[RMDB]
RNA sequence: GGGAACGACUCGAGUAGAGUCGAAAAAAAAAGAUAUGGACCUCAUUAGAUGUGAACUACGCUCGGGUUCUUCGGAAACGAAGAAUCUCUAGCGUGGCGCACAUAUUCUGAGGUCCUAAGUCAAAAACAAAUAAAUCACGUUCGCGUGAUUUAUUUGAAAAGAAACAACAACAACAAC
Reactivity to DMS in 0.01 (KOAc 150mM, MgCl2 10mM, bicine 150mM(pH8.5), 24C), signal-to-noise 1, nucleotides 027 to 126: a000a020a000a100a180g010a060u010a300u010g000g000a000c000c010u010c010a010u000u000a010g000a000u010g000u000g010a070a030c010u000a000c000g000c000u010c230g000g000g000u000u000c000u000u010c000g000g000a130a070a100c010g000a000a000g000a030a000u010c000u000c000u010a040g020c000g040u000g020g010c300g000c010a000c010a000u010a010u000u000c010u010g020a000g010g020u000c000c000u010a000a050g000u040c030a010a080a060a040a180